[RMDB]
RNA sequence: GGGAACGACUCGAGUAGAGUCGAAAAUGGUAAUGAUUCCUGGCUUACAGGGAAUGCUAUCCAAGGGUUUGCCUGUGGAUGUGGGGCAUCAUAUACAGCUAAUGAUGUCGAAGUCCAAUCAUCUGGCGUGGUUCACGGUUCGCCGUGAACAAAAGAAACAACAACAACAAC
Reactivity to 2A3 in 0.01 (KOAc 150mM, MgCl2 10mM, bicine 150mM(pH8.5), 24C), signal-to-noise 8, nucleotides 027 to 129: u110g030g000u120a080a060u130g110a020u060u030c010c010u010g030g050c080u150u210a060c070a070g020g020g020a030a020u080g040c030u040a020u050c020c030a030a040g080g040g050u070u100u100g050c000c010u060g020u060g080g010a030u040g040u140g120g080g000g000c010a000u000c000a000u100a020u050a120c090a030g040c060u130a100a030u020g000a010u000g010u000c010g030a070a020g040u010c010c000a000a050u090c020a030u000c050u080g020g000c030g070u090g040
Reactivity to DMS in 0.01 (KOAc 150mM, MgCl2 10mM, bicine 150mM(pH8.5), 24C), signal-to-noise 9, nucleotides 027 to 129: u000g000g000u030a030a040u040g020a070u040u010c010c010u000g010g020c110u060u040a100c080a070g010g030g010a000a000u030g020c080u030a070u050c020c030a090a130g000g020g020u010u010u010g010c000c060u010g030u010g030g020a030u020g060u000g030g030g020g000c030a030u000c010a030u050a120u050a100c250a080g000c180u000a060a010u100g020a020u030g000u030c030g020a090a230g010u020c040c020a020a040u030c080a070u030c030u010g010g030c000g040u000g000
This 170-nucleotide RNA was probed chemically with 2A3 and DMS. It was measured as part of the RMDB library 15KLIB.